[RMDB]
RNA sequence: GGGAACGACUCGAGUAGAGUCGAAAACAUAGCGAGUGUGAACGGUCAAUCCGGCCAACUAAAGCUUUCAUAAUGGUCAUAAGGCGGCUGACCAACGGUCUCCACUGUGAAGCACAAAUAGCGGGAUAUUUAUGGGCAGGUUCGCCUGCCCAUAAAUAAAAGAAACAACAACAACAAC
Reactivity to 2A3 in 0.01 (KOAc 150mM, MgCl2 10mM, bicine 150mM(pH8.5), 24C), signal-to-noise 2, nucleotides 027 to 126: c060a030u170a020g050c030g000a110g030u020g020u020g130a060a030c060g000g000u020c000a020a040u050c070c010g020g000c000c020a020a010c020u100a040a080a100g010c030u000u100u050c060a090u070a170a080u170g050g010u040c020a070u100a170a110g040g090c070g000g000c000u020g000a070c020c000a010a010c050g000g000u000c010u010c000c000a020c020u000g000u010g100a040a000g030c110a020c020a070a110a020u180a020g000c030g040g020g000a060u020
Reactivity to DMS in 0.01 (KOAc 150mM, MgCl2 10mM, bicine 150mM(pH8.5), 24C), signal-to-noise 2, nucleotides 027 to 126: c170a200u060a050g010c080g050a110g000u010g020u030g000a000a110c120g000g010u040c130a100a160u030c050c120g020g000c020c020a120a150c090u010a150a060a190g010c070u000u000u020c090a040u090a090a040u000g000g020u000c020a100u020a160a100g020g020c040g000g020c180u000g030a000c020c010a040a090c170g000g000u000c030u020c040c100a090c050u000g010u010g000a120a020g000c040a080c090a080a140a000u030a130g050c060g020g000g010a160u000
Structure probing data (2A3 and DMS) for a 177-nucleotide construct. Values cover nucleotides 27 to 126. It was measured as part of the RMDB library RFM100.